[RMDB]
RNA sequence: GGGAACGACUCGAGUAGAGUCGAAAAGCCCAGGCUGCCGCGACUGCAGCCCCCCCGGGACAUGGGGCCGCAGCACUGGGACAGGAGGGGCUGUGGGAGCUGGAGCCAGCUCAGGCCCCCAAACAGCGAUUGAGUAGAUCUUCGGAUCUACUCAAUCAAAAGAAACAACAACAACAAC
Reactivity to 2A3 in 0.01 (KOAc 150mM, MgCl2 10mM, bicine 150mM(pH8.5), 24C), signal-to-noise 1, nucleotides 027 to 126: g010c030c000c000a020g020g040c010u030g060c040c030g180c100g150a140c110u150g040c060a030g000c010c000c010c000c100c000c030g040g040g020a050c060a090u070g000g000g090g000c040c020g020c020a030g030c010a070c120u020g000g010g080a040c040a010g000g120a140g020g010g030g010c010u010g000u110g140g250g010a010g000c010u020g000g050a120g150c140c010a010g000c010u000c040a060g050g000c010c000c000c000c040a050a080a010c010a010g080c040
Reactivity to DMS in 0.01 (KOAc 150mM, MgCl2 10mM, bicine 150mM(pH8.5), 24C), signal-to-noise 2, nucleotides 027 to 126: g000c000c000c010a160g010g030c020u000g020c010c060g020c110g000a180c060u000g020c000a060g000c020c010c010c020c070c040c090g000g020g010a110c140a100u000g010g010g010g000c000c050g030c030a010g010c000a130c040u020g010g000g010a060c040a060g000g000a120g030g000g000g010c000u000g010u010g010g020g010a050g000c000u010g010g020a130g020c170c000a050g000c020u000c030a300g020g010c010c010c000c000c090a020a060a100c140a100g010c150